[RMDB]
RNA sequence: GGGAACGACUCGAGUAGAGUCGAAAAGAAAGAAAGAUGAUGAUAUGAUGAUCAAAUUUGAUUCCCUAUUGGUUUGAUUGGCCGCCAUGAUGGCCUCAAAUUGUAUUAGCUCUAUCUGAUCAUCUAAACGAGUGAAGACUUUCGAGUCUUCACUCGUAAAAGAAACAACAACAACAAC
Reactivity to DMS in 0.01 (KOAc 150mM, MgCl2 10mM, bicine 150mM(pH8.5), 24C), signal-to-noise 2, nucleotides 027 to 126: g000a050a080a080g000a080a090a070g000a060u020g000a090u010g000a100u040a020u000g000a010u010g000a010u000c010a020a030a100u000u020u020g000a100u020u030c080c080c010u000a120u030u000g010g000u000u010u000g000a030u020u000g010g010c040c040g000c140c200a120u020g000a080u010g010g010c030c020u040c030a020a010a010u020u000g000u020a050u020u000a060g010c190u010c060u000a000u010c010u000g000a010u000c010a020u000c000u020a020a090
Source information
This 177-nucleotide RNA was probed chemically with DMS. The data come from the RNA Mapping Database (RMDB), libraries RFM100 and RFMREP.